[RMDB]
RNA sequence: GGGAACGACUCGAGUAGAGUCGAAAAUUUCCCAGGGCGAGGCUUAUCCAUUGCACUCCGGAUGUGCUGACCCCUGCGAUUUCCCCAAAUGUGGGAAACUCGACUGCAUAAUUUGUGGUAGUGGGGGCAUAAGUGGGGUGUUCGCACCCCACUUAUGAAAAGAAACAACAACAACAAC
Reactivity to DMS in 0.01 (KOAc 150mM, MgCl2 10mM, bicine 150mM(pH8.5), 24C), signal-to-noise 5, nucleotides 027 to 126: u020u010u010c000c000c000a050g010g010g010c020g010a230g010g000c010u010u010a020u000c010c010a140u020u010g020c090a060c080u010c110c150g020g000a020u000g010u010g010c020u000g010a300c300c000c000c000u010g000c050g000a070u000u000u000c010c000c010c040a110a100a140u030g000u040g010g000g000a000a010a010c080u010c020g000a080c030u010g000c030a040u030a140a140u020u020u000g020u000g000g000u000a050g000u000g010g010g010g000g010
Reactivity to 2A3 in 0.01 (KOAc 150mM, MgCl2 10mM, bicine 150mM(pH8.5), 24C), signal-to-noise 5, nucleotides 027 to 126: u020u000u010c000c000c000a010g000g000g010c010g010a000g000g000c030u100u110a010u060c010c000a080u050u230g090c090a070c090u070c050c050g030g010a010u030g030u040g000c000u020g040a050c010c000c000c000u010g000c010g030a040u020u020u010c000c000c000c030a110a300a170u300g030u300g000g030g000a010a000a000c050u030c030g070a050c030u010g000c030a040u060a160a230u300u110u130g070u040g040g020u020a030g020u070g010g000g000g020g000
This 177-nucleotide RNA was probed chemically with DMS and 2A3. The RNA was probed in 150 mM KOAc, 10 mM MgCl2 and 150 mM bicine (pH 8.5) at 24 C. For 2A3 the reverse transcriptase was SuperScript II with manganese. For DMS the reverse transcriptase was MarathonRT. Source: RMDB libraries RFM100 and RFMREP, as collected in RNAgym.